[RMDB]
RNA sequence: GGGAACGACUCGAGUAGAGUCGAAAAAGUCUCCACAUCUGCAAAUGUGGAAUAAUAAUUAGAUCCUCCCAGGGUAAGUGAGAGGAUUAAGGUGAAAUGUAUUCUGCAAAGCUCCCAGUGUAAUGCCUGGCACAUAGUAGAUGCUCGAUAAACAGUAUCAUUAUGCUAGUUUCGACUAGCAUAAUGAAAAAGAAACAACAACAACAAC
Reactivity to DMS in 0.01 (KOAc 150mM, MgCl2 10mM, bicine 150mM(pH8.5), 24C), signal-to-noise 2, nucleotides 027 to 156: a160g000u000c030u000c000c010a040c020a020u000c030u000g070c180a050a070a080u000g020u010g000g000a040a060u010a010a090u000a140a110u000u010a200g000a050u000c010c000u000c010c000c020a090g000g000g020u010a050a170g020u020g010a060g000a040g030g000a060u000u000a070a100g030g010u020g020a090a080a110u020g010u000a080u000u000c030u000g010c040a040a130a140g000c060u010c050c000c020a130g020u000g000u000a070a070u000g030c040c030u000g000g050c100a050c030a040u000a140g020u000a060g010a070u020g020c040u000c090g040a120u000a100a080a050c100a070g020u000a060
Reactivity to 2A3 in 0.01 (KOAc 150mM, MgCl2 10mM, bicine 150mM(pH8.5), 24C), signal-to-noise 3, nucleotides 027 to 156: a010g090u040c020u000c020c000a020c000a000u040c060u150g050c040a020a080a120u000g000u010g010g010a000a000u070a060a010u020a000a040u150u070a040g040a040u000c000c010u000c000c020c020a030g180g040g010u200a080a070g100u030g080a100g000a000g000g000a010u040u060a050a050g090g010u080g080a020a070a020u080g000u050a070u040u040c010u040g010c020a040a090a120g020c010u020c000c010c000a010g020u030g040u120a070a060u050g040c010c010u010g040g010c040a000c010a020u070a030g040u000a000g030a040u040g010c040u010c090g040a080u140a100a120a020c080a040g050u100a030